[RMDB]
RNA sequence: GGGAACGACUCGAGUAGAGUCGAAAAGAUAUGGAUCUGAUCGUUCGCGAAGAACUAGUAUGGGAUAACAUGGUCGGAAACGACCAUGGAAGCCCAUACUAGGGAGCGAACGCGUAGAUCCUAAGUCCAAUAUAUAUUUCUUCGGAAAUAUAUAUUGAAAAGAAACAACAACAACAAC
Reactivity to DMS in 0.01 (KOAc 150mM, MgCl2 10mM, bicine 150mM(pH8.5), 24C), signal-to-noise 3, nucleotides 027 to 126: g010a130u010a300u000g000g010a020u000c000u010g000a080u000c010g010u000u000c010g020c000g020a120a200g020a100a220c020u000a010g000u010a010u000g000g010g000a030u000a170a300c000a000u000g010g000u010c000g000g000a120a120a210c020g000a020c000c000a000u000g000g000a070a260g010c000c000c000a000u000a010c000u000a010g000g000g000a080g010c000g000a000a010c000g010c210g020u000a020g000a010u000c000c000u000a050a100g010u010c040
Reactivity to 2A3 in 0.01 (KOAc 150mM, MgCl2 10mM, bicine 150mM(pH8.5), 24C), signal-to-noise 2, nucleotides 027 to 126: g050a040u150a080u250g000g010a010u030c010u030g020a080u110c000g000u010u000c010g000c030g220a300a100g010a050a030c010u010a000g000u000a000u010g000g020g010a020u000a090a020c000a010u000g010g010u000c000g000g000a090a100a120c020g000a010c060c030a000u000g010g000a010a020g000c000c000c000a000u000a000c000u000a000g000g000g010a010g000c010g000a010a020c000g000c010g000u030a000g010a000u000c000c000u020a150a030g040u010c020